This 177-nucleotide RNA was probed chemically with 2A3. Conditions: 150 mM KOAc, 10 mM MgCl2 and 150 mM bicine (pH 8.5), 24 C.
RNA sequence: GGGAACGACUCGAGUAGAGUCGAAAAUAACUAGGAAAAAGUUGUUUCAACAAACCCAUGUGCGCUUCAUCAUCGCCUUCGAUAAUAACAGCCUUUUCCUUGUAGAGCACUGAUAACUCCUGCUCGCGCGCCAUCUGCAAUUCGUUGCAGAUGGCGCAAAAGAAACAACAACAACAAC
Reactivity to 2A3 in 0.01 (KOAc 150mM, MgCl2 10mM, bicine 150mM(pH8.5), 24C), signal-to-noise 1, nucleotides 027 to 126: u100a010a000c030u100a210g050g070a000a070a070a000a000g000u000u000g000u000u020u000c010a020a000c020a010a110a000c020c020c060a040u080g100u100g000c010g000c010u060u010c020a140u000c000a030u100c020g040c000c020u000u050c010g000a000u060a230a030u030a180a000c000a000g000c000c000u000u030u070u110c000c000u020u000g070u090a060g000a020g000c030a000c150u270g040a100u220a280a040c020u100c060c000u020g000c000u030c040g000c000